[RMDB]
RNA sequence: GGGAACGACUCGAGUAGAGUCGAAAAGCCUGGGGAUUUGUAGAUGAAUCUAAUCAGGCUAGCUCCAUGAAAGCCUGUUGGUAGGCCAACAUGAGAGCGAAUGAUAAUAUACCAACUACGCGUGUAGAAGCCUGAGUGGCGAUAUCCUUGGACGAGGCCACCUAAGCAACUUCGGUUGCUUAGGUGGAAAAGAAACAACAACAACAAC
Reactivity to 2A3 in 0.01 (KOAc 150mM, MgCl2 10mM, bicine 150mM(pH8.5), 24C), signal-to-noise 1, nucleotides 027 to 156: g000c000c020u010g000g000g000g000a040u030u030u030g240u240a110g020a280u300g010a030a000u050c000u030a130a020u160c000a000g000g030c000u000a000g000c000u000c000c000a010u010g000a000a000a000g000c030c000u030g000u040u010g000g010u060a000g020g000c010c000a010a010c010a000u110g010a110g030a000g190c010g010a030a040u150g070a020u000a180a000u010a000u000a000c000c000a020a040c000u010a020c000g060c070g030u090g000u030a070g030a210a040g010c000c080u160g060a180g030u120g050g010c010g010a080u050a020u160c000c030u010u000g070g040a070c030g030a050g030g000